[RMDB]
RNA sequence: GGGAACGACUCGAGUAGAGUCGAAAACUGCUGUUCUUAAUAGCUUGUGCAUCUGCUUUGUUACCUCUAUACCAUUGUGUAUAGUACCUUACACUGCAUUGUACUAUUAUGCUACAUUCUAUUUUACCAACUUAUUGUACUUCGGUACAAUAAGUUGAAAAGAAACAACAACAACAAC
Reactivity to 2A3 in 0.01 (KOAc 150mM, MgCl2 10mM, bicine 150mM(pH8.5), 24C), signal-to-noise 8, nucleotides 027 to 126: c020u070g050c060u080g070u130u040c040u060u110a110a070u020a050g010c020u030u060g010u010g000c000a030u020c050u060g010c020u040u020u020g020u030u040a040c020c020u020c010u000a010u000a010c010c030a260u190u260g030u010g000u160a000u000a000g010u010a010c010c000u020u020a010c010a010c020u010g000c010a030u030u040g020u040a030c010u030a080u190u040a060u130g030c020u020a020c010a060u080u040c030u110a190u060u130u040u050a060c040
Reactivity to DMS in 0.01 (KOAc 150mM, MgCl2 10mM, bicine 150mM(pH8.5), 24C), signal-to-noise 7, nucleotides 027 to 126: c050u000g010c120u010g010u000u000c050u000u000a060a170u000a020g010c090u000u000g010u000g010c020a020u010c180u000g010c020u000u000u000g010u000u000a060c120c100u000c010u000a000u000a010c010c020a260u010u010g020u010g020u000a010u000a010g010u000a040c100c090u000u000a040c010a020c040u000g000c000a040u000u000g010u000a040c060u000a080u000u000a050u010g000c050u000a030c080a080u000u000c050u000a080u000u000u000u010a150c220